[RMDB]
RNA sequence: GGGAACGACUCGAGUAGAGUCGAAAAGAUAUGGAUCGCCAUAAACGCGAAGAACUCGGAAACGAGGGAGCGUGUGGGCGAUCCUAAGUCAAACCACCUGACACCUCUUCGGAGGUGUCAGGUGGAACAAUGGUACGGUGUUCGCACCGUACCAUUGAAAAGAAACAACAACAACAAC
Reactivity to 2A3 in 0.01 (KOAc 150mM, MgCl2 10mM, bicine 150mM(pH8.5), 24C), signal-to-noise 2, nucleotides 027 to 126: g010a010u060a060u120g000g020a000u000c000g020c000c010a040u170a160a300a010c020g030c020g150a300a110g000a080a030c000u000c000g020g040a040a120a010c010g000a000g000g050g000a030g020c010g020u040g060u100g090g030g010c000g010a000u000c000c000u000a000a010g000u000c020a060a070a030c000c000a000c000c000u000g000a000c000a000c010c000u060c060u140u130c300g130g030a000g000g010u000g000u010c000a000g000g010u000g000g000a000a000
Reactivity to DMS in 0.01 (KOAc 150mM, MgCl2 10mM, bicine 150mM(pH8.5), 24C), signal-to-noise 4, nucleotides 027 to 126: g010a030u000a300u000g000g000a000u000c000g000c000c000a080u010a060a150a010c000g020c010g000a090a170g000a190a230c000u000c000g000g000a130a120a180c000g000a010g000g000g000a100g010c000g020u000g010u010g000g000g010c000g000a000u000c000c000u000a010a060g000u000c000a100a110a210c010c010a000c000c000u000g000a010c000a000c010c000u000c000u000u020c250g020g010a020g020g010u000g000u000c000a000g000g020u010g000g000a010a070